[RMDB]
RNA sequence: GGGAACGACUCGAGUAGAGUCGAAAACAUCGCGACUUCGGUCGCGAUGAAAGUUGUCCUCCCUCACGCAUAACAAAUCCCAAUGAGGGUAGGUGACUGCAAAACGACACGCCUUCGGGCGUGUCAAGUAGCACAAUGGGUUCGCCCAUUGUGCUACAAAAGAAACAACAACAACAAC
Reactivity to DMS in 0.01 (KOAc 150mM, MgCl2 10mM, bicine 150mM(pH8.5), 24C), signal-to-noise 1, nucleotides 027 to 126: c000a000u010c000g040c000g020a010c000u000u000c200g050g020u000c000g010c060g000a000u000g020a000a060a060g040u000u000g000u000c000c000u000c010c000c000u020c000a070c180g000c160a070u000a050a140c260a030a120a140u000c010c020c040a090a110u000g000a010g010g010g000u000a030g010g000u010g000a060c040u000g000c260a020a070a100a150c210g000a010c000a010c000g020c000c000u000u020c160g040g020g000c000g040u000g000u000c000a010a000
Annotation:
This 177-nucleotide RNA was probed chemically with DMS. Reactivities are given for positions 27 through 126. The data come from the RNA Mapping Database (RMDB), library M2PK50. The DMS profile rests on 871 reads. DMS adducts were read by reverse transcription with MarathonRT. Conditions: 150 mM KOAc, 10 mM MgCl2 and 150 mM bicine (pH 8.5), 24 C.